[RMDB]
RNA sequence: GGGAACGACUCGAGUAGAGUCGAAAAGAUAUGGACUCACUGAGACAUGAACCAGGUGUCGGAAACGACACCGUUCAACAGCUCAAUGAGUCCUAAGUCAAAAGAUAAGCUGUUCGCAGCUUAUCAACUAUAGCGUUGACUUCGGUCAACGCUAUAGAAAAGAAACAACAACAACAAC
Reactivity to DMS in 0.01 (KOAc 150mM, MgCl2 10mM, bicine 150mM(pH8.5), 24C), signal-to-noise 2, nucleotides 027 to 126: g010a040u000a070u020g010g000a040c010u000c000a010c040u000g000a020g030a010c210a120u010g020a020a000c020c060a260g040g020u000g010u010c000g000g000a010a010a020c010g010a050c000a000c000c000g000u030u000c000a050a160c190a180g000c000u040c000a020a010u000g000a000g000u000c000c020u010a000a030g000u000c000a110a140a160a130g000a020u000a000a030g000c010u000g000u020u060c240g010c000a000g000c000u000u020a000u030c000a140a150
Reactivity to 2A3 in 0.01 (KOAc 150mM, MgCl2 10mM, bicine 150mM(pH8.5), 24C), signal-to-noise 1, nucleotides 027 to 126: g000a010u020a030u070g030g000a010c010u000c010a000c010u020g000a000g000a020c170a300u240g000a010a000c040c050a170g000g010u000g010u010c000g000g060a000a030a020c010g000a000c000a010c000c000g030u010u000c000a100a170c150a180g010c000u000c000a000a020u010g020a000g000u030c000c010u000a000a010g010u000c010a000a000a130a140g000a010u000a000a000g000c010u020g090u130u270c300g000c220a000g000c030u020u000a000u000c000a000a000
Chemical mapping of a 177-nucleotide RNA with DMS and 2A3. DMS adducts were read by reverse transcription with MarathonRT. The RNA was probed in 150 mM KOAc, 10 mM MgCl2 and 150 mM bicine (pH 8.5) at 24 C.